[RMDB]
RNA sequence: GGGAACGACUCGAGUAGAGUCGAAAAACGCGACCGACAUUCAGGAGUUUCUGGCCGCACCGGUCGGAGCUCCGAGCGUCGAAGACGCUGUCUUCGCCAACGCGGCCGUCCACGAAGCCGUCGCAGAAUUACGCAAAAUGUUCGCAUUUUGCGUAAUAAAAGAAACAACAACAACAAC
Reactivity to 2A3 in 0.01 (KOAc 150mM, MgCl2 10mM, bicine 150mM(pH8.5), 24C), signal-to-noise 3, nucleotides 027 to 126: a000c040g000c010g010a030c030c030g020a030c040a110u040u040c060a130g040g020a020g020u120u300u050c060u080g020g000c000c010g090c120a150c070c120g000g050u110c000g000g000a010g000c010u000c010c010g010a000g000c010g000u030c020g060a080a050g050a010c000g000c160u050g050u000c020u020u020c020g060c020c020a050a020c070g010c000g000g000c000c000g030u060c030c010a160c100g030a020a000g000c020c010g020u040c020g010c020a000g070a100
Reactivity to DMS in 0.01 (KOAc 150mM, MgCl2 10mM, bicine 150mM(pH8.5), 24C), signal-to-noise 6, nucleotides 027 to 126: a120c150g000c010g020a080c060c030g020a040c020a060u000u020c060a140g030g000a040g000u010u010u010c040u010g010g020c010c000g020c200a140c270c130g020g030u000c000g010g010a010g000c030u000c020c020g000a030g000c060g010u000c000g000a120a080g000a050c020g010c080u010g000u010c030u000u000c020g010c060c040a120a160c150g000c020g000g000c020c030g000u000c020c030a080c140g010a080a090g000c010c040g000u010c030g020c050a090g010a140